[RMDB]
RNA sequence: GGGAACGACUCGAGUAGAGUCGAAAAUUGACCGGCUGCACCCCACCGUGAUUCGUGAUAGCUUCCGACACAGUGUGAUCCAAGUGCGCGAUGGCGGUCGCCAUGUCCUCUGGGCACAUUUGCCAUAUGACUGACACCUGUUCGCAGGUGUCAGUCAAAAAGAAACAACAACAACAAC
Reactivity to DMS in 0.01 (KOAc 150mM, MgCl2 10mM, bicine 150mM(pH8.5), 24C), signal-to-noise 1, nucleotides 027 to 126: u020u000g000a080c000c080g000g040c030u000g020c000a070c040c100c040c020a050c010c020g010u020g000a170u000u000c020g000u000g020a030u000a180g050c150u010u010c050c010g000a050c020a010c020a020g010u000g010u020g020a100u000c110c080a020a180g010u000g000c060g040c110g000a030u000g000g000c070g000g030u000c140g030c060c050a090u000g000u000c000c000u000c100u000g010g050g000c010a110c220a050u010u000u010g030c020c080a070u000a110
Reactivity to 2A3 in 0.01 (KOAc 150mM, MgCl2 10mM, bicine 150mM(pH8.5), 24C), signal-to-noise 1, nucleotides 027 to 126: u080u080g050a010c040c000g100g020c040u080g030c000a040c000c020c010c020a010c000c000g040u000g040a120u090u090c080g050u190g070a000u020a040g020c000u050u000c010c000g000a010c000a020c010a090g000u030g000u070g130a050u030c070c060a170a010g060u040g040c030g020c050g040a020u040g050g020c030g020g010u020c020g000c010c000a050u050g050u000c000c040u110c090u050g060g020g120c000a060c000a120u150u170u110g050c030c000a050u080a040

Structure probing data (DMS and 2A3) for a 177-nucleotide construct.
It was measured as part of the RMDB library OK2TST.
For 2A3 the reverse transcriptase was SuperScript II with manganese.
DMS adducts were read by reverse transcription with MarathonRT.